This 177-nucleotide RNA was probed chemically with DMS and 2A3.
RNA sequence: GGGAACGACUCGAGUAGAGUCGAAAAAUCGCGAGCCGUCCGUCGCGCCAGAUCGGCAUGAGCGGCUCAAGCGCCGGAUGCAGCGCGGCGCGCUCGUCGAGCUGCACGACCUGCUCGCGCUUGACGAGCCUUUUACGGUGUUCGCACCGUAAAAGGCAAAAGAAACAACAACAACAAC
Reactivity to DMS in 0.01 (KOAc 150mM, MgCl2 10mM, bicine 150mM(pH8.5), 24C), signal-to-noise 2, nucleotides 027 to 126: a070u020c020g020c020g000a020g010c020c200g010u020c140c170g030u000c040g020c070g000c120c040a080g000a060u010c080g000g010c000a080u000g010a070g020c020g030g000c010u000c080a080a100g010c030g020c010c020g000g020a170u020g020c120a070g010c040g030c020g000g010c120g010c090g000c020u000c000g010u000c020g000a020g000c010u000g020c030a050c070g010a040c040c040u010g010c090u000c040g010c010g030c060u000u010g010a070c090g000a170
Reactivity to 2A3 in 0.01 (KOAc 150mM, MgCl2 10mM, bicine 150mM(pH8.5), 24C), signal-to-noise 2, nucleotides 027 to 126: a010u070c030g000c040g010a010g000c010c050g040u160c060c070g070u030c020g000c000g060c100c010a060g020a150u090c020g030g000c120a090u180g020a000g030c040g000g050c040u010c010a000a010g000c000g000c000c020g140g060a160u190g040c130a050g020c040g010c000g050g000c230g000c000g000c060u030c000g000u020c000g000a000g000c000u050g000c030a020c030g020a040c000c040u020g000c010u040c020g000c000g010c060u040u070g030a030c050g030a020
Source information:
The RNA was probed in 150 mM KOAc, 10 mM MgCl2 and 150 mM bicine (pH 8.5) at 24 C. Reactivities are given for positions 27 through 126.